Structure probing data (2A3 and DMS) for a 177-nucleotide construct. It was measured as part of the RMDB library OK1LIB. Reactivities are given for positions 27 through 126. Conditions: 150 mM KOAc, 10 mM MgCl2 and 150 mM bicine (pH 8.5), 24 C.
[RMDB]
RNA sequence: GGGAACGACUCGAGUAGAGUCGAAAACAAACAAGAAAACGGCAGUACGGUAAAUCUGCCGAUACCGUGAGCCUGCAGCCUAAAACAAAUGGCGAACGUCAACAGGCAAGACGUGAACAAAACAAAAGAUACGCUCCUGAUUCGUCAGGAGCGUAUCAAAAGAAACAACAACAACAAC
Reactivity to 2A3 in 0.01 (KOAc 150mM, MgCl2 10mM, bicine 150mM(pH8.5), 24C), signal-to-noise 2, nucleotides 027 to 126: c040a020a060a000c000a020a050g190a040a120a020a000c030g010g050c000a000g000u170a070c120g130g140u240a010a060a050u000c000u000g000c020c000g000a000u000a020c000c000g040u000g020a000g000c000c000u030g000c010a000g010c010c040u140a180a150a100a110c100a010a040a000u060g000g000c000g000a180a010c020g120u060c040a020a070c000a160g020g020c000a000a000g110a000c010g100u210g050a010a070c030a000a170a000a000c100a000a180a000a000
Reactivity to DMS in 0.01 (KOAc 150mM, MgCl2 10mM, bicine 150mM(pH8.5), 24C), signal-to-noise 2, nucleotides 027 to 126: c110a130a030a030c220a020a190g010a030a080a050a160c020g000g050c000a010g000u050a100c030g030g020u060a000a120a020u020c000u040g000c000c000g070a040u040a000c060c000g040u000g020a100g000c000c000u030g090c050a040g070c000c000u000a050a060a200a030c300a030a020a140u060g010g030c000g020a010a010c090g000u020c190a090a180c000a110g000g020c000a190a060g000a000c010g130u010g000a080a000c120a090a070a000a080c150a110a020a110a070